Chemical mapping of a 207-nucleotide RNA with DMS and 2A3. As a SHAPE reagent, 2A3 marks flexible, mostly unpaired nucleotides at the ribose 2'-OH. The reactions ran in a buffer of 150 mM KOAc, 10 mM MgCl2 and 150 mM bicine (pH 8.5), at 24 C. Reactivities are given for positions 27 through 156. 2A3 adducts were read by reverse transcription with SuperScript II with manganese.

[RMDB]
RNA sequence: GGGAACGACUCGAGUAGAGUCGAAAACACAAUAAGCCAGAACAACACAGAGACAAGAUGCUUUGGAACGUCUGGGAGUCUCUGCUGUCUUAUUACAUACAAGGACCCUGGCAUUUCCUGCUAAUUCAAAGGAAGAGAAGAAAAUUAGUGCCUGUUACAUCCGCAAAAUGUUCGCAUUUUGCGGAUGAAAAGAAACAACAACAACAAC
Reactivity to DMS in 0.01 (KOAc 150mM, MgCl2 10mM, bicine 150mM(pH8.5), 24C), signal-to-noise 1, nucleotides 027 to 156: c070a120c050a080a110u010a070a100g010c010c030a090g000a110a110c040a060a070c040a070c010a040g010a030g010a020c020a060a060g010a040u000g010c000u000u010u000g040g020a120a100c040g000u010c020u000g000g000g000a160g000u000c010u000c010u000g000c020u000g020u020c050u000u000a150u010u000a100c120a170u000a040c080a030a100g020g000a040c040c040c050u000g000g050c020a080u000u010u000c020c030u000g000c070u000a070a130u020u000c070a040a090a160g010g020a050a040g000a090g000a040a120g010a060a060a060a090u010u000a020g000u010g000c020c010u000g000u000u010a170
Reactivity to 2A3 in 0.01 (KOAc 150mM, MgCl2 10mM, bicine 150mM(pH8.5), 24C), signal-to-noise 3, nucleotides 027 to 156: c090a000c030a010a040u070a030a000g000c010c000a010g030a190a050c090a080a010c030a020c000a040g000a000g000a010c010a030a010g000a030u030g030c040u140u140u250g160g030a190a010c010g000u050c020u030g080g030g020a090g000u000c000u010c010u020g000c030u000g000u020c000u010u010a000u010u030a040c060a040u170a030c040a010a060g070g010a050c000c010c000u010g010g000c010a030u050u020u040c010c010u000g020c010u060a110a120u130u160c070a190a070a030g050g010a030a020g030a000g000a100a040g030a060a100a030a020u060u040a010g050u010g020c010c000u020g010u030u030a030